[RMDB]
RNA sequence: GGGAACGACUCGAGUAGAGUCGAAAAGAUAUGGAGUUCAUGGAGUCGAUAGGUCUAUCUUGAGAAAGGUCGGAAACGACCUUUCUCAAGCCGAGGACCGUCGACGUUGAAAUGAACUCCUAAGUCACACCUAAGAACACUUCGGUGUUCUUAGGUGAAAAGAAACAACAACAACAAC
Reactivity to DMS in 0.01 (KOAc 150mM, MgCl2 10mM, bicine 150mM(pH8.5), 24C), signal-to-noise 2, nucleotides 027 to 126: g000a070u000a300u000g000g010a020g000u000u000c000a000u010g030g000a070g000u010c000g020a020u000a080g080g010u010c000u000a140u010c010u000u000g000a020g010a030a020a000g030g020u000c000g000g000a090a090a250c000g000a000c010c000u000u000u000c000u000c010a000a000g000c300c160g050a240g000g020a010c000c000g010u000c000g030a020c010g040u000u050g000a080a120a010u000g010a010a010c000u000c010c000u000a010a050g000u000c010a300